[RMDB]
RNA sequence: GGGAACGACUCGAGUAGAGUCGAAAACAAAAAUGAUGCUCUUUUAUAACGACGGGCCAAGCAGAGUAUGGCGCAAACCGUUGAGUGCGCUAGAAAAACAAAAUAUCAUUCCAACGAUAAAAUUUGGGCGGAUUAUCGAUUUCGAUCGAUAAUCCGCAAAAGAAACAACAACAACAAC
Reactivity to 2A3 in 0.01 (KOAc 150mM, MgCl2 10mM, bicine 150mM(pH8.5), 24C), signal-to-noise 1, nucleotides 027 to 126: c100a000a170a000a040a000u260g140a050u030g010c000u000c000u070u100u040u250a230u160a300a000c090g040a030c010g000g000g010c030c020a000a000g200c000a030g120a000g080u020a000u300g020g000c000g000c000a030a020a030c040c000g040u020u000g010a000g000u040g000c000g000c030u010a020g080a030a140a000a000a000c090a000a000a040a000u040a000u110c090a060u250u000c160c000a000a010c050g000a050u120a090a080a000a080u110u300u160g030g030